[RMDB]
Description: Source: RMDB library RNAMAK, as collected in RNAgym. An RNA of 207 nucleotides, treated with 2A3 and DMS and read out base by base. High 2A3 reactivity points to a flexible backbone, as in loops and unpaired stretches. For 2A3 the reverse transcriptase was SuperScript II with manganese. For DMS, 5,732 sequencing reads were counted. The RNA was probed in 150 mM KOAc, 10 mM MgCl2 and 150 mM bicine (pH 8.5) at 24 C. The 2A3 profile rests on 5,351 reads.
RNA sequence: GGGAACGACUCGAGUAGAGUCGAAAACGCGCUUUCGAGCGCGGAAUCGCGUACUACGUGGGAGGACGAGGAUCACGAGGGCACUCGGUCCCAAAUAGGACCGUUGCCUCGUGGGAGUCCUUUGAUCACGUAUCGCAAAAGCAUCGUUCGCGAUGAAAUGAAUUAGGGUUUUCGAACCCUAAUUCAUAAAAGAAACAACAACAACAAC
Reactivity to 2A3 in 0.01 (KOAc 150mM, MgCl2 10mM, bicine 150mM(pH8.5), 24C), signal-to-noise 5, nucleotides 027 to 156: c010g030c010g010c020u110u130u180c300g110a040g010c010g000c010g000g020a010a080u130c060g000c000g020u070a060c060u010a000c030g010u010g010g040g000a010g010g000a000c000g030a190g060g030a010u020c010a000c000g020a080g030g140g040c010a020c110u110c040g010g000u010c020c010c030a160a300a130u300a040g010g000a000c000c010g010u010u010g010c000c000u000c000g010u000g000g000g010a020g010u000c000c000u050u040u040g020a030u020c000a000c000g010u010a030u250c030g000c000a000a050a030a060g050c010a010u050c010g080u120u150c160g030c030g090a030u080g030a120a120
Reactivity to DMS in 0.01 (KOAc 150mM, MgCl2 10mM, bicine 150mM(pH8.5), 24C), signal-to-noise 2, nucleotides 027 to 156: c010g020c010g020c000u000u000u000c210g010a030g020c000g090c000g010g010a050a050u010c030g030c010g000u000a120c060u000a020c020g040u000g000g000g010a020g010g010a030c010g010a140g010g000a120u000c000a020c000g000a080g000g000g020c040a070c100u000c000g060g000u000c000c000c020a050a100a150u000a060g020g020a010c000c010g010u000u000g010c000c000u000c000g040u000g000g020g010a150g010u000c000c010u000u060u000g000a120u010c020a050c010g000u000a020u010c030g000c030a080a070a100a160g000c080a080u000c070g000u000u000c110g030c020g030a040u000g020a090a150